Annotation: Chemical mapping of a 177-nucleotide RNA with DMS. DMS adducts were read by reverse transcription with MarathonRT.

[RMDB]
RNA sequence: GGGAACGACUCGAGUAGAGUCGAAAAAAAAGAUAUGGAUCGCUUGAGAGAGGUACACGAAACUAUAUCGGAAACGAUAUACCGAGUAGUGUACUACCCACCUCUCACUGGCGAUCCUAAGUCAAAAUCAUAGAUCUCGGUUCGCCGAGAUCUAUGAAAAAGAAACAACAACAACAAC
Reactivity to DMS in 0.01 (KOAc 150mM, MgCl2 10mM, bicine 150mM(pH8.5), 24C), signal-to-noise 1, nucleotides 027 to 126: a060a010a080a070g000a000u000a030u010g000g040a020u000c000g030c010u000u000g030a010g000a020g000a110g040g000u010a000c000a020c030g000a010a300a270c130u000a000u000a000u000c000g010g000a000a000a000c000g020a000u000a000u020a000c300c130g000a030g010u000a010g010u000g000u000a000c000u000a120c090c100c150a300c080c020u000c000u000c000a110c300u000g010g010c010g020a000u000c000c000u000a020a070g000u000c000a070a120a020a020